[RMDB]
RNA sequence: GGGAACGACUCGAGUAGAGUCGAAAACAGUGUGACAGUGACACUGACUCAGUGAGACACACAGACUCACAGUGACACUCACUCUGAGAGUGUCAGUGACUGACAGUCAGAGAGAGUCUCUGUCUCAUCACGUCACGUCAUUCGUGACGUGACGUGAAAAAGAAACAACAACAACAAC
Reactivity to DMS in 0.01 (KOAc 150mM, MgCl2 10mM, bicine 150mM(pH8.5), 24C), signal-to-noise 5, nucleotides 027 to 126: c040a090g020u000g000u010g020a100c070a060g000u000g000a030c000a100c000u010g000a170c030u010c040a120g020u000g000a060g000a040c020a040c190a140c210a070g010a050c020u000c010a120c090a150g010u000g020a030c020a030c030u000c000a090c170u000c180u010g000a070g000a020g010u000g010u000c010a030g010u000g010a040c040u010g010a140c230a060g010u000c020a050g000a130g000a130g020a020g010u000c000u010c050u000g020u000c000u000c010a060
Reactivity to 2A3 in 0.01 (KOAc 150mM, MgCl2 10mM, bicine 150mM(pH8.5), 24C), signal-to-noise 4, nucleotides 027 to 126: c030a050g050u020g020u030g140a040c030a070g030u030g090a010c010a010c030u000g020a040c000u000c030a050g060u020g070a030g020a020c020a010c000a000c010a070g060a070c000u000c020a050c020a040g070u020g040a000c020a010c050u050c000a040c020u090c120u110g120a140g000a000g080u010g000u000c000a000g030u020g060a040c010u040g060a060c050a060g000u010c020a000g060a010g010a000g010a010g090u000c000u000c000u030g000u010c000u000c020a020